[RMDB]
RNA sequence: GGGAACGACUCGAGUAGAGUCGAAAAGAUAUGGACGAAGCAUGGAAUACAUGAUGGGACAUGCGAUUGGUUCGGAAACGAACCUUUCGCAACAGCCCAAUAUGUAUUCCAUGCUUCGUCCUAAGUCCCUCACCUUAAGGUUCGCCUUAAGGUGAGGAAAAGAAACAACAACAACAAC
Reactivity to DMS in 0.01 (KOAc 150mM, MgCl2 10mM, bicine 150mM(pH8.5), 24C), signal-to-noise 1, nucleotides 027 to 126: g000a070u010a230u000g000g020a010c010g010a030a000g010c000a030u010g000g000a030a000u000a000c000a000u020g030a140u000g000g000g000a040c090a300u000g010c020g000a000u000u000g010g040u000u020c000g000g010a090a070a280c020g000a000a000c000c000u000u000u000c010g010c000a010a030c300a130g010c010c010c010a030a080u000a010u010g000u000a000u010u000c000c000a000u000g000c000u000u000c000g040u010c000c000u000a000a130g010u000c080